[RMDB]
RNA sequence: GGGAACGACUCGAGUAGAGUCGAAAAACCUUUGUGUCGAAUAGCACAUUGUCAGGUUCGUGGUAACCCAUUGGGUUACCAGAACCUUGGAUUUAUGUGCACAUUCGACACUCUGGUAAAAGAAGUAUAAAGUCGGUUCGCCGACUUUAUACUUCAACAUACGCAUCUACUUCGGUAGAUGCGUAUGAAAAGAAACAACAACAACAAC
Reactivity to DMS in 0.01 (KOAc 150mM, MgCl2 10mM, bicine 150mM(pH8.5), 24C), signal-to-noise 1, nucleotides 027 to 156: a040c000c000u010u010u000g010u000g020u000c010g000a040a000u010a160g060c010a010c000a000u000u010g020u000c000a080g010g010u000u000c000g050u020g100g000u010a010a010c010c010c020a300u000u030g030g030g020u000u000a020c010c010a020g000a000a000c000c010u000u020g020g010a030u000u000u000a000u000g010u000g040c000a080c080a150u030u000c000g010a020c010a000c000u000c020u010g030g040u000a080a060a090a100g010a030a030g000u000a000u000a000a010a020g000u000c000g010g000u000u010c300g050c020c010g010a010c000u000u010u000a000u000a000c000u000u000c010a030a090
Reactivity to 2A3 in 0.01 (KOAc 150mM, MgCl2 10mM, bicine 150mM(pH8.5), 24C), signal-to-noise 3, nucleotides 027 to 156: a000c000c000u030u020u010g000u000g000u000c000g010a000a010u020a040g000c010a000c010a000u000u010g030u000c000a000g040g020u030u020c080g240u300g030g000u010a010a010c010c010c040a130u220u300g000g000g000u010u000a010c020c020a000g000a000a000c000c010u000u070g030g010a010u000u270u210a000u020g010u000g000c030a020c000a040u010u010c000g000a000c000a000c000u000c000u000g000g000u040a050a050a020a060g010a000a000g010u000a000u010a010a000a000g000u000c010g050g030u040u160c240g080c060c000g010a000c000u000u000u000a000u000a000c000u000u000c000a000a000
Conditions: 150 mM KOAc, 10 mM MgCl2 and 150 mM bicine (pH 8.5), 24 C. Chemical mapping of a 207-nucleotide RNA with DMS and 2A3. It was measured as part of the RMDB library RNAMAK. The DMS profile rests on 4,073 reads.